[RMDB]
RNA sequence: GGGAACGACUCGAGUAGAGUCGAAAAUAAGUCUCUUUGCUACUUUAAUGACUUUUUCUGGUAAUGUAGAUCUUGAUGCGUUAGCUAGUGAUAUUUUUGACACUCCUAGCGUACUUCAAGCUACUCUGUGCUAUAUGGUUCGCCAUAUAGAAAAGAAACAACAACAACAAC
Reactivity to 2A3 in 0.01 (KOAc 150mM, MgCl2 10mM, bicine 150mM(pH8.5), 24C), signal-to-noise 9, nucleotides 027 to 129: u170a020a010g030u000c000u010c000u100u100u090g090c050u040a090c040u070u140u220a110a070u150g040a030c000u050u060u020u060u030c050u080g120g030u170a130a120u140g000u000a030g010a070u060c000u010u000g000a000u010g000c000g000u010u000a000g010c110u020a010g010u000g050a100u050a240u200u140u070u100u190g040a010c000a010c010u000c000c000u000a000g000c000g000u010a040c020u020u010c000a000a000g000c000u000a010c010u000c030u050g120u050g040
Reactivity to DMS in 0.01 (KOAc 150mM, MgCl2 10mM, bicine 150mM(pH8.5), 24C), signal-to-noise 9, nucleotides 027 to 129: u060a030a020g010u000c010u000c170u030u020u000g010c070u020a040c080u020u040u040a140a060u040g010a010c030u010u010u010u010u010c010u020g010g020u050a090a090u010g000u010a000g020a150u050c010u000u000g010a030u000g010c040g030u000u000a000g030c140u000a000g030u020g030a070u030a050u040u020u020u040u040g000a140c030a010c040u000c300c000u020a010g000c000g010u010a020c170u010u000c020a000a030g010c020u000a010c030u000c080u000g000u050g000
The data come from the RNA Mapping Database (RMDB), library 15KLIB. The record gives the reactivity of an RNA of 170 nucleotides to 2A3 and DMS. For 2A3, 91,219 sequencing reads were counted. The RNA was probed in 150 mM KOAc, 10 mM MgCl2 and 150 mM bicine (pH 8.5) at 24 C.